The record gives the reactivity of an RNA of 177 nucleotides to 2A3 and DMS.
2A3 is a SHAPE reagent: it acylates the 2'-hydroxyl of flexible nucleotides of all four kinds.
It was measured as part of the RMDB library OK2TST.
For 2A3 the reverse transcriptase was SuperScript II with manganese.
The RNA was probed in 150 mM KOAc, 10 mM MgCl2 and 150 mM bicine (pH 8.5) at 24 C.
The 2A3 profile rests on 1,360 reads.
RNA sequence: GGGAACGACUCGAGUAGAGUCGAAAAAGGGCUAGGACCCAUGUUACCAGGUUCCUCACCAUGGCUUGCAAUGAGGUGCCGCAGGUUGACUUCGCUGAUCUUCAGGAGUCUUUGGCUGAGGCCCUGCCUGCAUGAUACGCUUCGGCGUAUCAUGCAGAAAAGAAACAACAACAACAAC
Reactivity to 2A3 in 0.01 (KOAc 150mM, MgCl2 10mM, bicine 150mM(pH8.5), 24C), signal-to-noise 2, nucleotides 027 to 126: a000g000g010g010c040u070a050g000g060a120c010c030c040a010u080g050u050u100a080c010c010a030g000g030u030u050c000c000u040c010a020c120c010a060u070g130g050c120u010u150g080c060a140a300u050g000a010g020g050u030g020c010c030g040c090a080g010g020u020u070g000a010c000u030u020c080g060c220u130g160a140u160c070u160u100c110a010g060g020a010g010u000c040u010u050u020g020g000c010u020g020a050g010g100c020c000c000u010g000c000
Reactivity to DMS in 0.01 (KOAc 150mM, MgCl2 10mM, bicine 150mM(pH8.5), 24C), signal-to-noise 3, nucleotides 027 to 126: a050g000g010g010c030u010a230g000g020a100c080c010c030a130u010g000u020u000a080c050c040a210g010g000u010u010c010c010u010c010a060c070c070a080u010g000g000c090u000u010g010c070a130a110u000g060a020g000g010u000g010c080c040g020c100a040g010g020u000u000g000a060c010u010u000c070g010c070u000g020a110u020c140u000u010c060a150g000g000a050g000u000c020u000u000u010g000g010c070u010g010a130g010g000c250c010c010u010g000c090